[RMDB]
Chemical mapping of a 207-nucleotide RNA with 2A3 and DMS. For 2A3, 8,174 sequencing reads were counted. 2A3 adducts were read by reverse transcription with SuperScript II with manganese. The reactions ran in a buffer of 150 mM KOAc, 10 mM MgCl2 and 150 mM bicine (pH 8.5), at 24 C. Reactivities are rounded to 0.1 and cut off at 0 and 3. Values cover nucleotides 27 to 156. The data come from the RNA Mapping Database (RMDB), library OK3TST. DMS adducts were read by reverse transcription with MarathonRT.

RNA sequence: GGGAACGACUCGAGUAGAGUCGAAAACAGGUCAUACUAGAGUAGGAUGGGCCCUUAAUCCAAUAUGACUGGUGUCAUUAUAAGAAGAGGAAGAGAUACACAAGGGCACACACCAGGAGAAUGUCAUGUGACAAUGGAAGCAGAGAUUGGAGAGCUAAAAUAGUGACGUAUUCGUACGUCACUAUUUAAAAGAAACAACAACAACAAC
Reactivity to 2A3 in 0.01 (KOAc 150mM, MgCl2 10mM, bicine 150mM(pH8.5), 24C), signal-to-noise 8, nucleotides 027 to 156: c030a010g020g040u040c020a040u060a110c070u110a090g050a040g110u150a040g020g040a050u060g010g030g030c020c000c000u060u110a070a050u030c020c030a050a070u110a050u080g030a030c020u050g020g070u070g030u060c030a040u020u200a080u070a220a080g100a040a010g010a020g040g020a020a030g020a030g020a030u090a070c070a010c030a100a040g010g010g000c010a000c000a000c010a010c010c010a010g040g040a050g040a060a070u090g030u070c050a030u120g040u080g070a020c020a020a050u070g030g010a030a010g010c040a010g010a010g010a070u020u100g020g000a050g000a000g030c050u080a060
Reactivity to DMS in 0.01 (KOAc 150mM, MgCl2 10mM, bicine 150mM(pH8.5), 24C), signal-to-noise 3, nucleotides 027 to 156: c040a240g020g010u000c030a050u000a060c050u010a050g020a090g020u000a050g030g000a100u000g020g020g020c030c040c000u000u000a060a100u000c030c030a080a100u000a040u000g010a040c010u000g030g010u010g020u010c060a110u000u000a100u010a080a100g010a060a060g020a100g020g000a060a060g010a070g000a110u000a060c060a060c080a070a100g020g000g020c020a040c040a030c010a090c040c040a100g000g010a080g010a040a080u000g010u000c060a090u000g010u020g010a040c070a090a070u000g030g020a080a070g010c020a090g020a090g000a090u010u010g010g000a070g000a080g010c040u000a070